[RMDB]
RNA sequence: GGGAACGACUCGAGUAGAGUCGAAAACUCGGACCUCCGUCGAGGGGGUUCACAUCCCCAACCCGCGGGCCGGCUACUCUUCUUUCCCUUCUCUCGUCUUCCUCGGUCAACCUUCGAAGUUCCUCUUGUAGCUCUUUGUUCGCAAAGAGCAAAAGAAACAACAACAACAAC
Reactivity to DMS in 0.01 (KOAc 150mM, MgCl2 10mM, bicine 150mM(pH8.5), 24C), signal-to-noise 8, nucleotides 027 to 129: c150u040c070g000g020a000c000c000u000c000c000g050u090c170g020a300g020g020g000g000g040u000u000c000a110c130a060u010c020c000c010c040a110a130c040c020c020g000c080g010g000g020c010c020g020g040c060u010a040c050u020c000u000u000c000u000u000u000c000c000c000u020u030c050u020c000u010c070g020u020c010u000u020c000c030u000c030g000g000u010c070a090a140c040c040u000u000c050g000a070a090g020u000u000c020c000u030c090u050u030g040u050a180
Reactivity to 2A3 in 0.01 (KOAc 150mM, MgCl2 10mM, bicine 150mM(pH8.5), 24C), signal-to-noise 9, nucleotides 027 to 129: c040u020c030g000g020a010c000c000u020c010c010g090u200c110g210a220g010g010g000g000g010u000u000c000a000c000a040u070c000c010c010c000a030a050c010c000c000g030c020g030g000g000c010c020g020g010c020u060a060c020u010c000u090u010c000u030u080u060c000c010c000u060u030c030u000c010u000c020g050u000c000u110u040c020c000u020c020g000g000u060c040a040a070c010c000u070u060c020g030a070a030g020u020u010c000c000u050c010u040u090g080u100a040
The data come from the RNA Mapping Database (RMDB), library 15KLIB. The record gives the reactivity of an RNA of 170 nucleotides to DMS and 2A3. The DMS profile rests on 64,966 reads. Reactivities are given for positions 27 through 129.